[RMDB]
RNA sequence: GGGAACGACUCGAGUAGAGUCGAAAAGCUAGCCAGCGCACGAUGAGACUGCCGUGACGUCUAGCCUGCGUCUCAACUAGUCUCCAUCAAUCAAAACGCUGGGAUUGAUCUACGAGACUAGUACACAGUGUAUGCAGUUCUUCGGAGCUGUAUACACAAAAGAAACAACAACAACAAC
Reactivity to DMS in 0.01 (KOAc 150mM, MgCl2 10mM, bicine 150mM(pH8.5), 24C), signal-to-noise 9, nucleotides 027 to 126: g010c010u000a070g010c100c030a050g010c040g000c020a030c030g000a080u020g010a120g010a080c080u020g010c070c020g000u000g000a080c050g010u020c020u000a070g000c020c030u020g010c050g000u010c010u000c020a120a050c010u000a000g000u000c000u010c000c160a030u000c020a020a010u010c010a080a070a080a100c130g010c100u010g000g010g000a020u000u000g000a010u000c060u010a110c300g000a020g000a010c000u000a010g020u000a070c190a080c220a130
Reactivity to 2A3 in 0.01 (KOAc 150mM, MgCl2 10mM, bicine 150mM(pH8.5), 24C), signal-to-noise 9, nucleotides 027 to 126: g020c010u030a010g020c010c040a030g010c030g010c040a010c030g060a060u140g030a040g080a120c080u120g070c050c010g040u040g050a170c010g020u060c020u020a010g000c000c010u030g020c030g060u000c010u000c020a020a010c000u010a000g000u000c000u000c010c000a010u000c000a000a010u010c010a010a060a070a110c120g050c140u140g040g030g000a000u000u010g000a000u010c010u060a040c050g000a000g000a010c000u000a000g010u070a010c090a000c010a030